[RMDB]
The record gives the reactivity of an RNA of 207 nucleotides to DMS and 2A3. The DMS profile rests on 3,582 reads. The data come from the RNA Mapping Database (RMDB), library OK3TST.
RNA sequence: GGGAACGACUCGAGUAGAGUCGAAAACGCUCGUACCCGAAGUUCCUCGUGAAGGGCUCGGGUGAGGUGACGAUUCAGGACGGCGUCGAGGGCCGCAUGAUCCCGCUGCCGAAGCUGUACGCAGAGGACGGCGCGUACAUGAUGGUCGACACCGACCCACUCAAAGGUAAUUCGUUACCUUUGAGUGAAAAGAAACAACAACAACAAC
Reactivity to DMS in 0.01 (KOAc 150mM, MgCl2 10mM, bicine 150mM(pH8.5), 24C), signal-to-noise 2, nucleotides 027 to 156: c050g030c030u000c030g040u010a040c000c000c000g020a040a140g020u010u000c000c000u000c140g030u000g000a100a070g020g020g000c010u000c000g020g030g010u000g010a010g030g020u000g030a170c030g020a160u000u000c060a040g030g000a170c040g040g010c010g030u010c010g030a180g040g030g000c000c000g040c030a020u020g000a170u000c030c040c000g020c010u000g010c000c000g000a200a220g030c050u000g040u020a110c200g000c010a070g000a300g000g010a070c000g010g020c030g000c040g000u000a050c010a050u000g020a090u000g040g000u010c000g010a090c030a110c020c010g000a080c010c030
Reactivity to 2A3 in 0.01 (KOAc 150mM, MgCl2 10mM, bicine 150mM(pH8.5), 24C), signal-to-noise 6, nucleotides 027 to 156: c080g020c030u020c040g110u100a030c000c000c000g010a120a050g020u300u300c020c010u070c020g240u210g240a150a030g000g000g000c010u000c000g010g000g000u010g000a060g000g050u100g020a050c040g070a090u110u130c060a020g030g010a030c020g020g010c020g020u020c020g070a270g040g050g020c010c000g000c020a010u000g020a100u030c110c090c010g010c020u040g000c000c000g010a020a010g010c030u110g060u270a080c160g000c010a000g020a020g050g030a130c010g010g000c010g010c020g000u040a050c010a010u040g070a130u150g060g020u080c010g000a020c000a020c030c010g040a070c010c000